[RMDB]
RNA sequence: GGGAACGACUCGAGUAGAGUCGAAAAUUCUAUCGUCAGCAAUGAGAGAACUGCACAUACUACUGUUCAUGUUGAGACAAAGGACAAUUGUGCGGAUAGCUAGAGAGCUCAACAUAAGUGUGGCUACCGUACCGUUGGUAUUCGUACCAACGGUACGAAAAGAAACAACAACAACAAC
Reactivity to 2A3 in 0.01 (KOAc 150mM, MgCl2 10mM, bicine 150mM(pH8.5), 24C), signal-to-noise 3, nucleotides 027 to 126: u050u000c010u040a120u090c060g130u060c000a050g020c020a060a140u150g000a040g000a010g000a150a070c030u040g030c000a020c000a070u090a060c010u030a040c040u050g030u050u060c030a040u030g000u060u070g060a050g010a060c060a070a130a030g090g010a020c040a070a100u040u030g030u010g010c000g000g020a100u100a030g020c000u080a020g020a000g030a000g170c020u000c070a020a060c030a060u090a050a020g070u090g030u070g090g000c020u030a060c000
Reactivity to DMS in 0.01 (KOAc 150mM, MgCl2 10mM, bicine 150mM(pH8.5), 24C), signal-to-noise 3, nucleotides 027 to 126: u010u000c040u000a100u010c050g010u000c030a070g030c100a080a100u000g010a110g010a190g010a080a120c050u000g020c020a060c040a040u000a100c170u010a050c270u020g000u000u020c080a080u000g010u010u000g010a060g010a110c060a040a060a080g000g000a030c090a080a120u000u000g020u010g000c010g010g010a080u000a100g010c050u000a060g000a120g000a140g010c020u000c040a030a030c030a050u010a040a110g000u000g030u000g010g000c020u000a050c160

Overview: Source: RMDB library OK2TRN, as collected in RNAgym. Chemical mapping of a 177-nucleotide RNA with 2A3 and DMS. For 2A3 the reverse transcriptase was SuperScript II with manganese. The RNA was probed in 150 mM KOAc, 10 mM MgCl2 and 150 mM bicine (pH 8.5) at 24 C. DMS adducts were read by reverse transcription with MarathonRT.